[RMDB]
RNA sequence: GGGAACGACUCGAGUAGAGUCGAAAAGGAGGACGAAGCAUAUUUCUGUUUCUGGAGGAUUAUUUAUAAUCUGCCGGAAAGUCUUGCAGGUGGCUAGGAUAUGUUCAGUCUGGUAGAAUUAAGCACGAAAACGUGUCCUUGUUCGCAAGGACACGAAGGAUGCAUACGAGUUCGCUCGUAUGCAUCCAAAAGAAACAACAACAACAAC
Reactivity to 2A3 in 0.01 (KOAc 150mM, MgCl2 10mM, bicine 150mM(pH8.5), 24C), signal-to-noise 1, nucleotides 027 to 156: g060g040a020g000g010a000c030g040a080a000g050c010a020u000a010u010u100u090c020u080g090u000u080u000c000u040g000g000a020g020g010a000u000u000a040u060u270u030a100u020a030a000u010c010u040g140c000c010g010g010a070a000a020g010u020c050u130u130g010c050a020g080g050u040g000g030c020u020a020g010g030a040u030a010u180g080u120u080c050a020g000u000c070u050g020g010u050a020g080a070a040u130u080a090a010g120c010a020c130g000a030a010a060a060c000g010u000g000u000c000c010u020u000g000u020u020c090g000c120a000a000g000g030a000c000a000c000g000a010a010
Source: RMDB library M2RFPK, as collected in RNAgym.
Structure probing data (2A3) for a 207-nucleotide construct.
The reactions ran in a buffer of 150 mM KOAc, 10 mM MgCl2 and 150 mM bicine (pH 8.5), at 24 C.
Reactivities are given for positions 27 through 156.